The data come from the RNA Mapping Database (RMDB), library VIROID. Structure probing data (2A3 and DMS) for a 177-nucleotide construct. The RNA was probed in 150 mM KOAc, 10 mM MgCl2 and 150 mM bicine (pH 8.5) at 24 C. For DMS the reverse transcriptase was MarathonRT. DMS (dimethyl sulfate) methylates the pairing face of unpaired adenines and cytosines.
[RMDB]
RNA sequence: GGGAACGACUCGAGUAGAGUCGAAAAUGGAAGAGAAGAAGCGGACUCCCCGAUCCGAGGGUCCCGGCCACCAAGUUUGGAAAGCACUCCGGGCCAAAUGGUUGAGUAGCACUCAGAGGGAGGAAUCGAACAUAAGUUUGUUCGCAAACUUAUGUUCAAAAGAAACAACAACAACAAC
Reactivity to 2A3 in 0.01 (KOAc 150mM, MgCl2 10mM, bicine 150mM(pH8.5), 24C), signal-to-noise 2, nucleotides 027 to 126: u090g020g020a050a050g020a010g010a130a000g050a020a000g010c030g030g060a050c020u060c030c000c000c010g030a040u030c020c040g020a070g050g010g000u110c000c010c000g020g040c010c020a030c010c010a090a070g020u110u160u120g080g010a140a150a000g060c040a020c070u040c020c020g040g000g020c010c000a040a060a030u140g050g000u000u030g000a030g020u090a020g050c040a020c030u010c030a000g070a100g060g010g010a030g040g030a030a060u090c090
Reactivity to DMS in 0.01 (KOAc 150mM, MgCl2 10mM, bicine 150mM(pH8.5), 24C), signal-to-noise 4, nucleotides 027 to 126: u000g000g020a040a070g000a060g010a050a060g020a070a060g010c080g010g010a160c030u000c030c030c020c030g020a160u010c070c060g010a050g010g000g010u010c030c020c000g010g000c140c050a080c060c060a080a140g010u000u010u000g010g010a080a090a140g000c130a070c130u000c030c050g010g000g000c030c030a050a070a100u000g000g010u020u010g010a050g030u000a090g020c080a300c040u000c040a040g010a090g000g000g020a030g000g010a060a070u010c170